[RMDB]
RNA sequence: GGGAACGACUCGAGUAGAGUCGAAAAUUUUGAGGAAAUUCCAAUAGCUUGUAUUCGUUUUGAGUUAGUUUUCCUUCAUCUUUCAAUACAGCCAAGCUUCCGUACAAAAUGGAAAGGGUAUCCGAAAGGCAUGCAAAGGAUUCGUCCUUUGCAUGCCAAAAGAAACAACAACAACAAC
Reactivity to 2A3 in 0.01 (KOAc 150mM, MgCl2 10mM, bicine 150mM(pH8.5), 24C), signal-to-noise 2, nucleotides 027 to 126: u090u100u020u130g020a010g010g030a030a000a000u140u040c000c000a020a050u070a060g020c020u010u020g000u030a050u090u030c090g020u000u030u060u030g060a060g000u070u110a000g010u000u040u100u140c000c000u020u040c060a140u000c010u010u100u020c020a050a000u010a040c010a040g080c060c020a000a030g000c010u090u000c020c000g060u130a240c020a090a050a040a060u190g020g010a050a030a030g050g030g030u020a040u020c000c040g030a110a080a000

The record gives the reactivity of an RNA of 177 nucleotides to 2A3.
Values cover nucleotides 27 to 126.
Conditions: 150 mM KOAc, 10 mM MgCl2 and 150 mM bicine (pH 8.5), 24 C.
2A3 adducts were read by reverse transcription with SuperScript II with manganese.
Reactivities are rounded to 0.1 and cut off at 0 and 3.